[RMDB]
RNA sequence: GGGAACGACUCGAGUAGAGUCGAAAAGCUGCCCUGCGAGUUGCUAUCCUCCAGGUCGCUCUGGCAGCCCUCGUCGUUGAGCGAGCUCUGCUUGGUGACCUUGGGCGACAGCAGCUUCACCAGGUCGACCCGUAUAAUUGUUCGCAAUUAUACGGGUAAAAGAAACAACAACAACAAC
Reactivity to 2A3 in 0.01 (KOAc 150mM, MgCl2 10mM, bicine 150mM(pH8.5), 24C), signal-to-noise 3, nucleotides 027 to 126: g070c050u060g030c010c000c000u010g000c040g020a010g010u010u020g000c000u010a010u030c000c010u000c010c010a000g010g000u010c010g000c010u180c090u100g000g000c000a010g000c020c000c010u020c000g030u010c040g100u110u300g080a090g080c000g000a000g010c020u010c000u030g000c000u000u030g020g000u010g010a000c000c000u020u050g010g010g000c040g010a010c020a000g010c000a000g000c000u030u040c000a030c050c000a010g010g030u050c040g060
Reactivity to DMS in 0.01 (KOAc 150mM, MgCl2 10mM, bicine 150mM(pH8.5), 24C), signal-to-noise 4, nucleotides 027 to 126: g020c110u010g000c160c010c020u000g020c100g010a020g020u000u000g000c020u000a080u000c010c000u000c010c020a030g000g010u000c010g010c000u010c100u000g010g000c020a030g000c060c100c000u000c010g020u000c040g020u010u000g000a180g010c010g000a030g020c110u000c010u000g000c010u010u000g010g000u000g000a020c010c000u000u000g010g000g000c300g000a010c020a010g010c000a010g010c000u000u000c040a100c300c020a020g000g010u000c060g010

Annotation: The record gives the reactivity of an RNA of 177 nucleotides to 2A3 and DMS. Reactivities are rounded to 0.1 and cut off at 0 and 3. For 2A3 the reverse transcriptase was SuperScript II with manganese. Values cover nucleotides 27 to 126. The reactions ran in a buffer of 150 mM KOAc, 10 mM MgCl2 and 150 mM bicine (pH 8.5), at 24 C. Source: RMDB library RFMREP, as collected in RNAgym.